Annotation
Source: RMDB library OK1LIB, as collected in RNAgym. An RNA of 177 nucleotides, treated with 2A3 and DMS and read out base by base. Reactivities are given for positions 27 through 126. For DMS, 3,773 sequencing reads were counted. The reactions ran in a buffer of 150 mM KOAc, 10 mM MgCl2 and 150 mM bicine (pH 8.5), at 24 C.
RNA sequence: GGGAACGACUCGAGUAGAGUCGAAAACAGAAGACCCAGUGUGGUUGAUAUCACAAGAAGGGAAGUGACCCUCAAACCAAAUGGAAUAUUCUGGAGAGUUUUCACCUAAUUCUUUAGCACGGGCACACAGUGGUGCUUUAUUCGUAAAGCACCACUGAAAAGAAACAACAACAACAAC
Reactivity to 2A3 in 0.01 (KOAc 150mM, MgCl2 10mM, bicine 150mM(pH8.5), 24C), signal-to-noise 6, nucleotides 027 to 126: c020a010g090a100a010g050a120c020c010c030a070g070u040g000u020g090g050u080u090g100a100u160a070u200c050a030c010a040a050g190a050a110g050g000g020a050a140g110u050g150a240c010c020c000u010c020a060a060a060c010c000a020a120a060u130g040g040a100a070u100a070u220u030c050u030g020g010a030g010a010g060u030u010u030u150c070a080c020c000u050a080a120u070u040c020u040u100u080a040g010c040a010c020g000g010g000c000a010c000a000
Reactivity to DMS in 0.01 (KOAc 150mM, MgCl2 10mM, bicine 150mM(pH8.5), 24C), signal-to-noise 3, nucleotides 027 to 126: c060a160g000a080a030g000a210c050c020c000a080g010u000g010u000g000g000u010u000g000a160u010a070u010c110a020c130a060a050g020a090a040g020g020g030a170a170g000u000g010a080c240c300c030u000c070a060a060a150c060c020a110a020a060u010g000g030a120a050u030a110u020u000c060u000g000g000a050g010a100g010u010u000u000u010c070a050c040c030u010a080a160u030u000c030u000u020u020a140g010c060a010c020g010g000g010c010a080c140a180